Structure probing data (2A3) for a 207-nucleotide construct.

[RMDB]
RNA sequence: GGGAACGACUCGAGUAGAGUCGAAAAAAACUUUUGUGAGUUGCUGAAACGGGACUAAUCUCCUCACCGAGGCUAAGCAAGUAAAAUACGCCUCUCAUAUCCUUACCUGAGGGUGGUAAGGAAAUAACCUGCAACGCUUCCUUCGGGAAGCGUUGAACCUACUUCAUAGUUUCGACUAUGAAGUAGGAAAAGAAACAACAACAACAAC
Reactivity to 2A3 in 0.01 (KOAc 150mM, MgCl2 10mM, bicine 150mM(pH8.5), 24C), signal-to-noise 2, nucleotides 027 to 156: a020a010a040c140u180u100u070u120g020u040g010a080g000u030u030g020c040u060g020a030a070a090c060g020g000g030a010c020u080a060a080u050c030u030c040c010u060c010a040c030c060g020a000g000g010c040u100a050a020g070c090a140a060g040u190a050a070a030a020u090a030c060g000c000c010u010c010u000c010a050u050a010u160c000c000u010u000a040c000c000u040g030a100g000g140g000u010g010g000u010a010a000g000g000a010a000a000u010a000a020c010c050u080g000c010a010a000c010g000c010u000u000c010c000u010u030c020g110g030g000a000a010g000c000g000u020u000g000a000a010

The data come from the RNA Mapping Database (RMDB), library M2RFPK. Conditions: 150 mM KOAc, 10 mM MgCl2 and 150 mM bicine (pH 8.5), 24 C.